Background
An RNA of 207 nucleotides, treated with 2A3 and read out base by base. It was measured as part of the RMDB library OK3TST. The 2A3 profile rests on 776 reads.
[RMDB]
RNA sequence: GGGAACGACUCGAGUAGAGUCGAAAAUCGGCUAUUUCUUCAUCAGAUAAAUGAGCUAUGUAUUUAUCAUUAUUAACUUGUUCCUCUGAUGGAUAAUCUUCAUUUUCACUAGCUUGAACAUAACCAGUAGCAGUAAAAGUAAAAGUUAAAACAAAAACCGUGUAAAACAGUUCGCUGUUUUACACGGAAAAGAAACAACAACAACAAC
Reactivity to 2A3 in 0.01 (KOAc 150mM, MgCl2 10mM, bicine 150mM(pH8.5), 24C), signal-to-noise 2, nucleotides 027 to 156: u090c030g020g000c020u040a080u100u130u000c040u040u020c010a020u010c010a000g000a030u030a030a100a020u020g010a000g000c050u090a010u090g050u040a080u090u120u150a100u130c080a030u010u190a020u080u090a050a130c010u030u030g000u030u000c010c000u010c020u000g010a020u010g050g000a000u050a090a040u070c110u080u020c080a130u080u030u010u070c040a020c070u010a040g010c000u020u080g020a020a010c040a080u080a050a040c020c020a020g050u070a020g030c020a000g000u050a000a110a100a000g040u070a070a070a060a040g050u120u210a080a300a020a040c040a000a070a190a010a030